[RMDB]
RNA sequence: GGGAACGACUCGAGUAGAGUCGAAAAGGAUUUUUAUCAUAUUCCCCUUUUCCCUCUCUUGUACUAUUUGCUAUAAUAGUUGUCAGUUUUUCUUUAGUGUUGGAUUUAAUGAGAUCAAAAUAUUCAGGGAUACACUCUAAUUCGUUAGAGUGUAUCCAAAAGAAACAACAACAACAAC
Reactivity to DMS in 0.01 (KOAc 150mM, MgCl2 10mM, bicine 150mM(pH8.5), 24C), signal-to-noise 2, nucleotides 027 to 126: g040g000a040u000u020u030u010u020a040u010c030a060u000a200u000u000c020c010c000c130u010u010u000u000c000c010c020u000c030u000c040u000u010g010u000a040c050u000a050u010u000u010g000c130u010a050u020a030a050u020a080g010u000u010g000u010c060a090g000u000u000u000u010u000c020u000u000u010a110g020u020g000u010u000g000g000a070u010u020u010a040a070u030g000a100g000a070u000c050a030a070a050a050u020a050u000u000c090a080g000
Reactivity to 2A3 in 0.01 (KOAc 150mM, MgCl2 10mM, bicine 150mM(pH8.5), 24C), signal-to-noise 2, nucleotides 027 to 126: g060g060a090u040u020u030u110u230a160u090c060a100u160a090u160u000c080c000c000c000u040u000u040u110c000c030c000u030c020u000c020u030u100g060u080a050c010u090a080u000u070u020g050c050u110a020u060a220a000u000a070g000u000u100g090u060c070a100g040u020u000u020u000u050c030u000u030u080a160g010u030g050u030u020g020g030a000u080u110u160a080a160u200g030a050g010a040u110c110a000a170a030a090u290a050u080u230c090a080g010